[RMDB]
RNA sequence: GGGAACGACUCGAGUAGAGUCGAAAAGACGAAGAGGAAAUAGAGGUCGCGCAGGAGUCUUACUCCUUCAUGUGUCCGAUUUACGGAUCCUCUGAGAUGAGCGUGAAGGUUUUCCCCGGACACGAAAACCGCUAAUGGCUUUCGAGCCAUUAGCGGUAAAAGAAACAACAACAACAAC
Reactivity to DMS in 0.01 (KOAc 150mM, MgCl2 10mM, bicine 150mM(pH8.5), 24C), signal-to-noise 1, nucleotides 027 to 126: g010a090c020g000a100a070g010a130g020g000a070a130a030u030a090g030a280g010g020u010c020g020c050g030c140a010g010g030a080g010u020c180u030u020a090c070u000c040c010u000u010c050a040u020g040u000g000u000c000c020g010a190u010u000u000a090c070g000g020a130u000c080c060u050c020u000g000a210g070a100u000g000a050g030c050g060u000g000a140a080g000g010u010u000u000u000c000c000c070c030g000g000a070c090a060c050g000a050a030a080
Structure probing data (DMS) for a 177-nucleotide construct. It was measured as part of the RMDB library OK2TST. Reactivities are given for positions 27 through 126.